[RMDB]
RNA sequence: GGGAACGACUCGAGUAGAGUCGAAAAGAUAUGGAUAACGUCAACAACAGCAUAGGGUUCGGAAACGAACCUAUGACAUGUUGGUGUUAUCCUAAGUCAAAUCCGAACGUCUUCGGACGUUCGGAAAGCUCUCUUACAAGUUCGCUUGUAAGAGAGCAAAAGAAACAACAACAACAAC
Reactivity to 2A3 in 0.01 (KOAc 150mM, MgCl2 10mM, bicine 150mM(pH8.5), 24C), signal-to-noise 2, nucleotides 027 to 126: g000a010u040a000u030g010g000a000u000a010a000c010g010u020c020a020a010c060a040a040c070a060g040c010a010u040a030g270g190g070u070u000c010g000g000a000a000a000c010g010a000a000c000c000u000a000u000g020a030c110a240u300g000u000u000g030g000u020g000u000u000a000u000c000c010u000a000a000g000u000c020a040a020a220u000c000c010g010a010a000c000g010u000c010u080u100c210g140g000a000c020g000u010u000c000g000g000a000a000a000
Reactivity to DMS in 0.01 (KOAc 150mM, MgCl2 10mM, bicine 150mM(pH8.5), 24C), signal-to-noise 2, nucleotides 027 to 126: g000a010u010a100u010g000g000a010u000a000a000c000g000u000c000a020a010c000a130a090c200a200g000c000a010u000a020g020g010g000u010u000c010g010g000a020a010a030c000g020a000a020c000c000u000a010u000g010a030c040a180u010g010u000u010g010g000u000g010u000u000a010u000c000c010u010a000a090g000u000c000a090a200a180u000c000c000g000a010a010c000g050u000c000u010u020c300g020g010a010c000g020u000u000c000g010g000a000a020a070
The record gives the reactivity of an RNA of 177 nucleotides to 2A3 and DMS. The reactions ran in a buffer of 150 mM KOAc, 10 mM MgCl2 and 150 mM bicine (pH 8.5), at 24 C. It was measured as part of the RMDB library TTRDES.